[RMDB]
Source: RMDB libraries RFM100 and RFMREP, as collected in RNAgym. An RNA of 177 nucleotides, treated with DMS and 2A3 and read out base by base. For 2A3 the reverse transcriptase was SuperScript II with manganese. The reactions ran in a buffer of 150 mM KOAc, 10 mM MgCl2 and 150 mM bicine (pH 8.5), at 24 C. High DMS reactivity at an A or C suggests that its Watson-Crick edge is free. Values cover nucleotides 27 to 126.

RNA sequence: GGGAACGACUCGAGUAGAGUCGAAAAGUAGCAGCGUUAGUCGGGUAAGAAUCCCGAUGGCCGAAAGAGCAAGGGUUCCUCGGCAAUGCUUAUCAGCCGAGGGUUAGCCGAUCCUAAGGCCCGUCGUAAAACGUAAGAUUUUCGAAUCUUACGUUUUAAAAGAAACAACAACAACAAC
Reactivity to DMS in 0.01 (KOAc 150mM, MgCl2 10mM, bicine 150mM(pH8.5), 24C), signal-to-noise 9, nucleotides 027 to 126: g020u010a070g010c080a100g010c050g010u010u010a110g020u000c000g010g000g010u010a110a120g010a200a120u020c010c010c010g010a020u000g010g010c000c010g000a080a170a080g000a050g000c120a100a140g000g000g010u010u010c000c000u000c000g010g000c010a110a060u020g010c240u020u020a090u020c170a150g010c000c000g000a020g000g000g000u010u020a060g000c010c010g000a110u000c010c010u010a090a270g000g010c010c010c090g010u010c080g010u010
Reactivity to 2A3 in 0.01 (KOAc 150mM, MgCl2 10mM, bicine 150mM(pH8.5), 24C), signal-to-noise 9, nucleotides 027 to 126: g120u130a010g030c080a010g000c020g040u050u100a040g030u040c010g000g010g010u080a270a120g080a160a100u090c010c010c000g000a020u020g000g000c000c000g060a080a080a010g050a010g030c120a060a090g070g000g010u080u060c000c000u010c000g000g000c040a060a060u110g040c080u200u230a150u270c070a030g150c000c000g010a000g010g010g000u020u040a010g030c000c000g030a100u030c010c000u050a080a020g000g000c000c000c000g050u040c020g020u030